[RMDB]
RNA sequence: GGGAACGACUCGAGUAGAGUCGAAAAGGUGAGUCCUGACAAGCUUGUCAGUGACAAGUGGUUUCAGACACAGAGGUCAAAAGUGAGCAGGACCUUGUUUGAUGAUCUCUGGGGAAGACUCAGAGCAAAAACAUCAAGACUUCGGUCUUGAUGUUUUAAAAGAAACAACAACAACAAC
Reactivity to DMS in 0.01 (KOAc 150mM, MgCl2 10mM, bicine 150mM(pH8.5), 24C), signal-to-noise 9, nucleotides 027 to 126: g010g010u010g010a050g000u010c010c010u010g010a030c090a170a250g010c040u010u000g010u000c010a180g020u050g010a010c010a030a020g000u010g010g020u020u020u000c020a040g010a300c060a060c020a020g010a010g000g010u000c010a020a140a070a050g010u010g010a030g010c090a130g020g010a110c180c050u000u000g000u000u010u000g010a240u020g000a010u000c000u000c000u000g010g000g000g000a120a100g010a070c010u000c000a030g010a110g040c230a030
Reactivity to 2A3 in 0.01 (KOAc 150mM, MgCl2 10mM, bicine 150mM(pH8.5), 24C), signal-to-noise 5, nucleotides 027 to 126: g140g030u090g050a040g000u010c000c010u010g000a020c030a110a050g080c060u100u050g010u040c110a270g100u090g140a000c010a000a020g030u050g040g050u050u180u070c050a030g030a040c010a010c020a080g040a020g030g010u010c000a030a040a000a080g170u150g050a050g040c070a090g060g130a090c020c000u030u020g090u060u050u100g100a140u030g030a040u020c000u000c000u010g030g000g010g040a140a130g020a010c010u000c010a020g000a010g090c080a030
Structure probing data (DMS and 2A3) for a 177-nucleotide construct.
The 2A3 profile rests on 4,033 reads.
2A3 adducts were read by reverse transcription with SuperScript II with manganese.
The RNA was probed in 150 mM KOAc, 10 mM MgCl2 and 150 mM bicine (pH 8.5) at 24 C.
DMS adducts were read by reverse transcription with MarathonRT.
As a SHAPE reagent, 2A3 marks flexible, mostly unpaired nucleotides at the ribose 2'-OH.